[RMDB]
RNA sequence: GGGAACGACUCGAGUAGAGUCGAAAAAGAAUAUAUACAAAAGUUUCCUCAUCAUUUAAUUUGCUUGUAUUAUGAGUGAAUUCAAUACUGGAGAUAAACCACCAAUAUUUUGUAUAGAAGUCAGUCUGAUAGAGCUUUGUGUAUUAUAAUGGUCUCACGAUUUAGUAAUCUUCGGAUUACUAAAUCGAAAAGAAACAACAACAACAAC
Reactivity to 2A3 in 0.01 (KOAc 150mM, MgCl2 10mM, bicine 150mM(pH8.5), 24C), signal-to-noise 1, nucleotides 027 to 156: a000g090a050a090u170a000u040a010u000a220c020a030a080a030a080g030u080u150u000c020c030u080c040a120u030c040a040u000u000u120a040a080u000u030u090g030c040u050u020g090u190a210u250u180a160u300g000a000g030u020g020a000a000u040u030c030a060a000u030a170c090u130g100g000a020g040a060u110a120a150a140c000c000a040c110c000a000a040u160a120u180u090u090u040g020u020a010u000a150g080a060a000g080u080c020a000g040u050c040u100g020a040u060a080g030a000g050c000u000u060u200g060u110g010u020a040u000u080a060u090a090a020u080g100g000u030c060u040c100a060
Notes: The data come from the RNA Mapping Database (RMDB), library OK3TST. An RNA of 207 nucleotides, treated with 2A3 and read out base by base. For 2A3 the reverse transcriptase was SuperScript II with manganese. Reactivities are given for positions 27 through 156. The reactions ran in a buffer of 150 mM KOAc, 10 mM MgCl2 and 150 mM bicine (pH 8.5), at 24 C.